The record gives the reactivity of an RNA of 177 nucleotides to DMS and 2A3. Source: RMDB library OK1LIB, as collected in RNAgym. DMS adducts were read by reverse transcription with MarathonRT. For 2A3 the reverse transcriptase was SuperScript II with manganese.

RNA sequence: GGGAACGACUCGAGUAGAGUCGAAAAGACCUCGUGAUCCGCCCACCUCGCCCUCCCAAAGUGGUGGGAUUACAGGUGUGAGCCACCGUGUCCACCCGACGGUGGUCCCCUCAUAGGAGGUGGCUGGCUAUCAUACGGCGUUCGCGCCGUAUGAUAGAAAAGAAACAACAACAACAAC
Reactivity to DMS in 0.01 (KOAc 150mM, MgCl2 10mM, bicine 150mM(pH8.5), 24C), signal-to-noise 2, nucleotides 027 to 126: g000a200c010c020u010c130g050u000g000a070u010c020c030g000c300c000c010a020c000c030u000c040g000c020c000c000u010c000c000c050a130a180a220g030u040g010g000u000g010g000g000a040u020u020a070c170a010g000g020u030g040u080g000a050g000c000c000a000c000c010g040u000g030u000c100c020a090c050c000c050g000a010c040g000g010u000g010g010u010c020c010c000c010u000c110a080u010a070g000g020a040g000g030u000g000g000c050u000g000g000
Reactivity to 2A3 in 0.01 (KOAc 150mM, MgCl2 10mM, bicine 150mM(pH8.5), 24C), signal-to-noise 5, nucleotides 027 to 126: g060a020c010c020u050c050g090u090g050a130u000c000c010g040c030c010c010a030c010c000u010c000g060c010c000c000u090c000c010c000a190a300a060g160u250g050g000u020g030g020g020a020u040u140a020c020a010g000g020u070g040u120g070a060g110c000c000a000c000c000g020u040g040u050c060c030a100c030c070c040g070a020c010g000g000u000g000g000u000c000c000c000c000u060c020a110u180a100g110g020a010g030g000u000g000g000c020u030g020g000